Chemical mapping of a 207-nucleotide RNA with DMS and 2A3. The RNA was probed in 150 mM KOAc, 10 mM MgCl2 and 150 mM bicine (pH 8.5) at 24 C. The DMS profile rests on 2,250 reads.
RNA sequence: GGGAACGACUCGAGUAGAGUCGAAAAAACCUGGCAAAAGGAGACAGAUGGAGAACAGAACAGACCCAACAACCUCAGGAGAAUGAACAGCCAGGUGUUCCCUGAGGCCAGUGGUAGUGUCUGCAUGGACCGUUGCUGGCUGUGGUCCUCUGCAGGACGCUAUCAUAUCGUUCGCGAUAUGAUAGCGAAAAGAAACAACAACAACAAC
Reactivity to DMS in 0.01 (KOAc 150mM, MgCl2 10mM, bicine 150mM(pH8.5), 24C), signal-to-noise 1, nucleotides 027 to 156: a040a050c000c040u000g000g020c060a130a070a050a140g020g000a080g000a130c060a100g000a080u000g030g010a070g050a090a210c250a120g000a080a020c070a130g010a070c010c020c020a120a050c020a140a060c000c000u010c020a050g000g000a250g000a030a070u000g000a040a060c010a160g010c010c030a030g020g030u000g010u000u000c000c000c020u000g000a020g000g030c000c070a030g040u030g010g010u010a130g030u010g030u010c010u020g000c060a220u000g020g000a050c040c020g050u000u000g000c000u030g000g020c050u040g000u010g010g010u010c020c010u010c040u010g040c040a090g050g010a120
Reactivity to 2A3 in 0.01 (KOAc 150mM, MgCl2 10mM, bicine 150mM(pH8.5), 24C), signal-to-noise 2, nucleotides 027 to 156: a010a030c030c000u030g020g000c040a070a030a070a110g070g030a070g020a040c030a020g050a010u090g070g000a070g050a140a030c000a050g060a080a050c030a050g040a120c000c030c040a030a030c020a030a020c030c010u000c000a010g030g070a060g090a140a220u250g020a040a040c020a020g020c000c000a010g000g010u000g000u020u010c000c000c010u000g000a000g000g020c000c020a040g020u100g030g050u050a120g030u030g020u090c000u000g050c070a020u090g010g000a000c000c000g040u040u120g050c070u050g050g040c010u030g030u030g050g020u000c010c000u040c060u040g010c020a040g070g010a000